Structure probing data (DMS and 2A3) for a 177-nucleotide construct. Conditions: 150 mM KOAc, 10 mM MgCl2 and 150 mM bicine (pH 8.5), 24 C. DMS adducts were read by reverse transcription with MarathonRT. Source: RMDB library OK1LIB, as collected in RNAgym. Reactivities are given for positions 27 through 126. For DMS, 3,448 sequencing reads were counted. 2A3 adducts were read by reverse transcription with SuperScript II with manganese. The 2A3 profile rests on 3,084 reads.
RNA sequence: GGGAACGACUCGAGUAGAGUCGAAAAGCACGUCCGGCAUGGCCCGUGCGAACACUUGAGCUCCGGCAUGGCCGCUCUUGUGGAUUAGGACGUUCUACGUCCGGCAUGGCCCGUAGUUCGUCCGAAAGGCUAGCUUGACGUUCGCGUCGAGCUAGCCAAAAGAAACAACAACAACAAC
Reactivity to DMS in 0.01 (KOAc 150mM, MgCl2 10mM, bicine 150mM(pH8.5), 24C), signal-to-noise 2, nucleotides 027 to 126: g010c030a070c080g040u050c070c000g010g020c060a110u040g040g020c050c020c020g030u000g000c000g000a130a100c030a000c000u000u000g000a010g000c030u020c080c010g000g030c130a070u060g010g020c060c110g010c010u000c010u000u000g010u000g010g010a140u020u000a110g000g000a000c010g000u000u000c010u010a000c000g000u070c030c010g000g000c060a180u030g000g000c160c220c000g000u000a000g010u000u000c000g000u010c000c000g010a010a070a090
Reactivity to 2A3 in 0.01 (KOAc 150mM, MgCl2 10mM, bicine 150mM(pH8.5), 24C), signal-to-noise 4, nucleotides 027 to 126: g010c000a000c000g040u060c070c020g070g040c260a240u280g150g030c040c060c030g020u020g000c000g030a060a000c020a010c030u010u040g000a000g010c020u060c050c030g100g060c130a230u130g110g020c020c020g010c010u000c000u000u020g040u010g010g030a070u020u160a040g000g000a000c000g010u000u010c010u010a000c000g060u040c090c000g000g080c150a200u220g050g030c010c000c010g000u000a020g020u000u000c000g010u020c010c000g010a030a030a000